[RMDB]
RNA sequence: GGGAACGACUCGAGUAGAGUCGAAAACAGCUAUCGAUUCGUCGAUAGCUGAAAAGGCUGAGUAGCUCAAAGUAGAGCAUACCGUUCAAAACGGUAAUGAAUGUGUUCGAUCCACAGCUCAGCCACCAAAAGUUUGGAACUAUUCGUAGUUCCAAACACAACCACGUGUAUUCGUACACGUGGUUGUAAAAGAAACAACAACAACAAC
Reactivity to DMS in 0.01 (KOAc 150mM, MgCl2 10mM, bicine 150mM(pH8.5), 24C), signal-to-noise 3, nucleotides 027 to 156: c000a020g000c000u000a010u000c010g020a080u000u000c290g040u000c000g020a020u000a010g010c000u000g000a000a030a080a120g030g000c000u020g000a030g000u000a110g010c010u000c000a090a070a210g040u000a140g010a020g000c010a300u000a010c020c000g000u000u010c300a120a110a110a060c020g000g000u000a020a080u010g010a070a080u010g000u000g000u010u000c110g010a230u000c050c000a030c020a060g000c020u000c000a020g010c010c000a040c030c010a050a120a090a090g000u000u000u000g020g010a020a020c010u000a020u000u010c270g020u000a010g000u000u000c000c000a000a000a000c000
Reactivity to 2A3 in 0.01 (KOAc 150mM, MgCl2 10mM, bicine 150mM(pH8.5), 24C), signal-to-noise 7, nucleotides 027 to 156: c010a000g000c000u000a000u000c000g010a010u020u110c170g030u010c000g130a000u000a000g000c000u000g000a000a000a000a010g010g000c000u000g000a000g010u040a030g010c000u000c020a210a240a030g190u200a070g050a000g000c010a000u020a000c000c000g010u020u130c130a110a140a050a010c010g020g010u050a040a060u170g080a040a040u030g010u010g010u070u130c060g030a050u020c040c000a000c000a000g010c000u000c000a000g040c000c000a010c000c000a000a110a020a030g000u000u000u000g000g000a000a000c000u010a030u070u090c210g080u040a000g000u000u000c000c000a000a000a000c000